[RMDB]
This 177-nucleotide RNA was probed chemically with DMS and 2A3. In probing experiments dimethyl sulfate is read out at A N1 and C N3, which are open when not base-paired. Values cover nucleotides 27 to 126. For DMS the reverse transcriptase was MarathonRT. 2A3 adducts were read by reverse transcription with SuperScript II with manganese. The DMS profile rests on 556 reads. The reactions ran in a buffer of 150 mM KOAc, 10 mM MgCl2 and 150 mM bicine (pH 8.5), at 24 C.

RNA sequence: GGGAACGACUCGAGUAGAGUCGAAAAGUCUAGCGAAUGGAUCCCACCCGGGAAACACGCAAGUCGCGAAUUACGCCGACCGGCCAAGGUCAAUGGCAGAACUCAACUGCAUGAGUAAGCUAGACGAGGCGUAUAGUAGCUUCGGCUACUAUACGCCAAAAGAAACAACAACAACAAC
Reactivity to DMS in 0.01 (KOAc 150mM, MgCl2 10mM, bicine 150mM(pH8.5), 24C), signal-to-noise 1, nucleotides 027 to 126: g010u000c000u000a040g000c000g050a050a030u000g000g000a210u050c010c000c000a140c300c100c220g000g000g050a030a130a230c000a010c040g050c040a110a050g010u050c170g000c060g000a150a170u000u030a110c010g000c000c100g000a080c070c030g060g000c180c180a030a100g000g000u040c100a020a160u040g000g010c020a080g000a030a040c140u000c060a030a040c020u000g000c080a030u000g010a110g000u000a100a100g000c000u000a000g050a000c030g000a080
Reactivity to 2A3 in 0.01 (KOAc 150mM, MgCl2 10mM, bicine 150mM(pH8.5), 24C), signal-to-noise 1, nucleotides 027 to 126: g000u020c000u010a000g000c010g090a180a110u120g030g050a040u010c010c000c000a020c050c000c000g000g000g000a000a100a000c040a010c090g000c090a040a040g110u160c070g010c000g100a090a140u260u070a070c050g000c010c050g030a010c020c000g000g140c080c090a070a070g090g000u100c000a060a070u130g060g030c000a010g020a120a030c020u000c050a000a110c050u060g000c040a030u040g020a000g090u050a070a030g000c000u000a000g000a000c010g000a060